[RMDB]
RNA sequence: GGGAACGACUCGAGUAGAGUCGAAAAGCCGCAAGGCUCACUUAUUUUUUUAAAGGUAAUUCACUAUGUCCGGUAAAAUGACUGGUAUCGUAAAAUGGUUCAACGCUGACAAAGGCUUCGGCUUCAUUUUAAGGUGAGUUUUCGAACUCACCUUAAAAAAAGAAACAACAACAACAAC
Reactivity to DMS in 0.01 (KOAc 150mM, MgCl2 10mM, bicine 150mM(pH8.5), 24C), signal-to-noise 2, nucleotides 027 to 126: g030c000c000g000c300a040a170g020g000c000u000c110a040c030u000u000a020u030u010u000u030u050u030u030a030a070a110g000g000u000a100a030u070u010c070a060c020u020a000u010g000u010c020c050g000g040u060a040a070a110a000u020g000a060c040u000g000g000u020a010u000c080g050u020a050a070a060a060u010g010g000u030u020c050a040a050c140g000c010u000g010a020c110a110a110a170g000g000c030u020u000c070g020g000c010u010u030c030a040u000
Reactivity to 2A3 in 0.01 (KOAc 150mM, MgCl2 10mM, bicine 150mM(pH8.5), 24C), signal-to-noise 2, nucleotides 027 to 126: g030c000c000g040c100a090a080g080g030c010u040c020a000c000u100u070a120u200u060u080u020u010u060u130a110a110a000g040g010u080a100a060u110u140c090a030c100u070a000u170g090u000c000c000g020g000u110a110a160a060a110u130g090a030c000u000g050g020u010a000u070c010g000u050a080a000a020a030u110g000g030u020u030c050a070a060c060g010c110u060g050a110c050a060a090a020g010g040c000u000u000c000g010g030c000u020u000c010a100u000